This 177-nucleotide RNA was probed chemically with DMS. In probing experiments dimethyl sulfate is read out at A N1 and C N3, which are open when not base-paired. DMS adducts were read by reverse transcription with MarathonRT. The DMS profile rests on 719 reads.

[RMDB]
RNA sequence: GGGAACGACUCGAGUAGAGUCGAAAAGAUAUGGAGCAGUAGAUAGGCGUUUGACGGUAGUCGGAAACGACUACCCGAGCCUAUGUACUUCCCUCCUAAGUCAAACCGAAUUGUUCGCAAUUCGGAACAAGCCGAAAUCGUUCGCGAUUUCGGCUUGAAAAGAAACAACAACAACAAC
Reactivity to DMS in 0.01 (KOAc 150mM, MgCl2 10mM, bicine 150mM(pH8.5), 24C), signal-to-noise 1, nucleotides 027 to 126: g000a000u000a300u000g020g030a050g050c220a000g010u000a010g000a010u000a000g000g000c030g030u000u030u020g010a230c300g000g010u000a000g030u000c030g020g000a070a160a220c000g030a030c000u000a010c000c010c010g000a070g050c000c000u010a010u000g000u000a000c000u030u010c070c190c000u000c000c000u000a120a100g000u000c010a130a100a250c010c010g000a050a030u000u000g000u020u010c160g010c010a010a030u000u010c010g000g010a090a100